[RMDB]
RNA sequence: GGGAACGACUCGAGUAGAGUCGAAAAUAAAUUUUGUGACCACAUGGUCAAGGCUGGUUUAGUCGGUGUGCUCACACUAGACAACCAGGACCUUAAUGGCAAGUGGUAUGAUUUUGGUGACUUCGUAUCGUAUAGAAGACUUCGGUCUUCUAUACGAAAAAGAAACAACAACAACAAC
Reactivity to 2A3 in 0.01 (KOAc 150mM, MgCl2 10mM, bicine 150mM(pH8.5), 24C), signal-to-noise 2, nucleotides 027 to 126: u020a000a020a010u070u110u080u100g080u040g080a040c000c000a020c010a010u190g030g000u020c010a010a000g030g000c000u000g000g070u030u080u160a050g000u000c010g000g000u020g010u020g050c060u120c110a020c000a020c010u060a140g000a020c010a010a000c000c010a000g010g030a010c000c000u060u040a120a080u130g010g000c020a070a000g020u000g000g030u000a010u060g080a060u020u070u050u100g090g010u030g050a060c030u020u020c050g050u050a060
Reactivity to DMS in 0.01 (KOAc 150mM, MgCl2 10mM, bicine 150mM(pH8.5), 24C), signal-to-noise 3, nucleotides 027 to 126: u010a060a050a070u010u000u000u000g010u010g000a020c000c000a040c020a060u020g020g010u000c020a020a020g010g000c000u000g000g010u000u010u010a080g020u000c000g000g010u000g010u000g020c270u010c290a030c000a010c000u010a080g020a010c020a050a000c000c000a000g010g000a080c010c010u000u020a070a120u010g010g000c010a060a030g030u000g000g010u000a060u000g000a050u010u000u000u000g010g020u010g000a130c170u000u000c030g020u000a190
The record gives the reactivity of an RNA of 177 nucleotides to 2A3 and DMS. Reactivities are given for positions 27 through 126.